[RMDB]
RNA sequence: GGGAACGACUCGAGUAGAGUCGAAAAGCUGUCAGCUUCGGCUGACAGCAAACGCUCAUCUCAUGGAGCGCAAGACGAAUUGCUACAUAUUCGACAUGAGAAAAAGCUGCGCGUUCGCGCGCAGCAAGUACGUAGAUCAGUUCGCUGAUCUACGUACAAAAGAAACAACAACAACAAC
Reactivity to 2A3 in 0.01 (KOAc 150mM, MgCl2 10mM, bicine 150mM(pH8.5), 24C), signal-to-noise 3, nucleotides 027 to 126: g010c000u000g010u010c010a000g010c020u060u110c180g110g000c000u020g000a000c000a000g000c000a000a000a000c010g000c010u010c000a060u000c000u000c000a000u010g030g000a000g000c050g000c220a130a030g110a050c020g010a010a010u040u070g070c070u190a140c050a160u200a030u060u020c010g020a000c000a010u010g010a000g030a080a020a020a000a000g000c000u000g000c020g000c000g020u030u070c210g000c000g000c000g000c090a000g000c000a000a010
Reactivity to DMS in 0.01 (KOAc 150mM, MgCl2 10mM, bicine 150mM(pH8.5), 24C), signal-to-noise 3, nucleotides 027 to 126: g010c000u000g000u010c000a010g010c010u000u010c210g050g020c000u010g010a000c020a000g010c010a010a070a140c020g010c010u000c000a120u000c000u000c000a000u010g000g000a010g020c010g000c130a120a080g020a070c030g000a020a030u000u010g020c120u000a120c140a100u000a050u000u000c020g030a180c010a000u000g000a020g010a040a160a110a140a100g030c000u000g000c000g020c010g020u000u010c160g010c000g020c030g020c000a010g000c000a010a010
The data come from the RNA Mapping Database (RMDB), library M2PK50.
Chemical mapping of a 177-nucleotide RNA with 2A3 and DMS.
The RNA was probed in 150 mM KOAc, 10 mM MgCl2 and 150 mM bicine (pH 8.5) at 24 C.
For 2A3, 6,048 sequencing reads were counted.
As a SHAPE reagent, 2A3 marks flexible, mostly unpaired nucleotides at the ribose 2'-OH.
For DMS the reverse transcriptase was MarathonRT.